[RMDB]
RNA sequence: GGGAACGACUCGAGUAGAGUCGAAAAAGAUGUAAAAGUGUCCCCCAGAGAGCUCAUAUGUUAGGCAAUGUAGCAAUGCUCAGAGGUGGAAAAUUUGGAUUGUGAGAUCUGUAACCUCAUCAGUGUGACGGUGUACAGGUUUCGACCUGUACACCGUAAAAGAAACAACAACAACAAC
Reactivity to DMS in 0.01 (KOAc 150mM, MgCl2 10mM, bicine 150mM(pH8.5), 24C), signal-to-noise 2, nucleotides 027 to 126: a120g030a080u010g020u000a090a040a080a130g020u000g030u010c010c010c060c030c050a070g010a120g000a060g020c030u000c060a060u000a100u000g010u000u020a040g000g010c130a090a060u020g030u000a010g010c010a060a090u000g030c020u010c020a030g040a150g010g030u010g000g000a040a030a040a100u000u040u000g020g000a060u020u000g000u050g000a170g010a020u000c030u000g000u000a070a080c060c020u000c020a030u000c100a050g010u020g000u020g020

Source: RMDB library OK2TST, as collected in RNAgym. This 177-nucleotide RNA was probed chemically with DMS. DMS adducts were read by reverse transcription with MarathonRT. The DMS profile rests on 1,172 reads.